[RMDB]
RNA sequence: GGGAACGACUCGAGUAGAGUCGAAAAUUGAGGUUGCAGUGAGGUAUGAUGGCACCACUGCACUCCAGUCUGGGCAACAGAGCAAAUCUUGUCCCUAAAAAUUAUUUUUGAAAAAUAAAGUGAAACAUGGGAACAGGACAGUGGUGGGCAUUGUGUAAUAAUCAUGUCAGUUCGCUGACAUGAUUAUAAAAGAAACAACAACAACAAC
Reactivity to 2A3 in 0.01 (KOAc 150mM, MgCl2 10mM, bicine 150mM(pH8.5), 24C), signal-to-noise 1, nucleotides 027 to 156: u060u050g030a030g000g020u090u080g000c000a010g010u020g020a090g060g030u140a070u160g070a060u080g060g000c030a020c010c000a010c010u050g000c000a020c010u060c000c020a000g050u020c050u040g010g000g000c030a140a010c050a090g030a030g000c010a150a050a010u000c000u000u030g010u040c000c000c000u030a090a100a080a040a070u090u050a050u050u050u010u040u120g050a080a070a010a010a000u100a070a020a030g040u000g060a150a030a010c010a070u120g000g020g030a090a000c020a030g020g000a020c020a010g020u030g010g030u070g000g000g050c040a060u000u080g000u010g000u010a070
Reactivity to DMS in 0.01 (KOAc 150mM, MgCl2 10mM, bicine 150mM(pH8.5), 24C), signal-to-noise 1, nucleotides 027 to 156: u000u020g030a040g040g040u000u030g030c000a020g020u000g030a120g030g060u010a040u000g010a110u010g080g040c020a110c010c010a070c020u000g000c010a020c000u010c000c030a130g000u000c030u000g040g000g010c000a040a040c060a050g000a160g010c000a050a060a150u010c000u000u000g010u000c020c020c000u000a050a010a230a100a300u000u000a060u020u000u000u000u010g000a040a110a100a040a160u000a000a060a090g060u010g000a030a080a070c050a110u000g010g030g000a040a040c030a010g090g000a020c000a100g000u000g010g060u010g010g000g020c050a080u020u020g000u010g010u020a050
An RNA of 207 nucleotides, treated with 2A3 and DMS and read out base by base. Conditions: 150 mM KOAc, 10 mM MgCl2 and 150 mM bicine (pH 8.5), 24 C. 2A3 adducts were read by reverse transcription with SuperScript II with manganese.